[RMDB]
RNA sequence: GGGAACGACUCGAGUAGAGUCGAAAAAUGGCUGGUGCAGCCGCCCGCCAGUGCUUGCGGGUGUGCACAGGCCUACAUCUAGGGUCAUAGGUGGGGAGCGGAUCCUGUCCAUCCUCAAUCCGGGCCCCCGUAGGACCUCUUUCGAGAGGUCCUACGGAAAAGAAACAACAACAACAAC
Reactivity to 2A3 in 0.01 (KOAc 150mM, MgCl2 10mM, bicine 150mM(pH8.5), 24C), signal-to-noise 3, nucleotides 027 to 126: a000u120g000g000c020u060g020g000u030g000c000a030g100c090c010g000c020c030c010g000c020c040a280g100u260g150c180u090u070g010c000g000g030g000u030g070u020g000c010a000c000a010g020g020c000c000u030a030c030a030u060c090u080a040g000g010g000u020c020a080u120a160g000g020u010g000g030g000g000a020g020c220g020g000a020u080c060c120u160g020u000c010c000a010u010c010c000u000c000a010a040u030c000c010g020g000g000c000c000c000
Reactivity to DMS in 0.01 (KOAc 150mM, MgCl2 10mM, bicine 150mM(pH8.5), 24C), signal-to-noise 1, nucleotides 027 to 126: a110u010g010g010c050u010g000g000u010g040c010a040g000c280c010g050c000c000c000g000c020c270a300g010u040g020c190u040u020g000c000g010g000g020u050g000u020g050c020a010c000a170g000g020c010c040u020a080c300a060u020c120u030a050g000g010g000u000c000a040u010a240g000g000u020g000g000g000g000a060g000c190g000g000a050u000c140c260u020g030u000c000c000a170u000c000c020u000c000a020a050u020c000c130g030g040g000c000c000c000
The data come from the RNA Mapping Database (RMDB), library RFM100. Chemical mapping of a 177-nucleotide RNA with 2A3 and DMS. Conditions: 150 mM KOAc, 10 mM MgCl2 and 150 mM bicine (pH 8.5), 24 C. The DMS profile rests on 1,135 reads.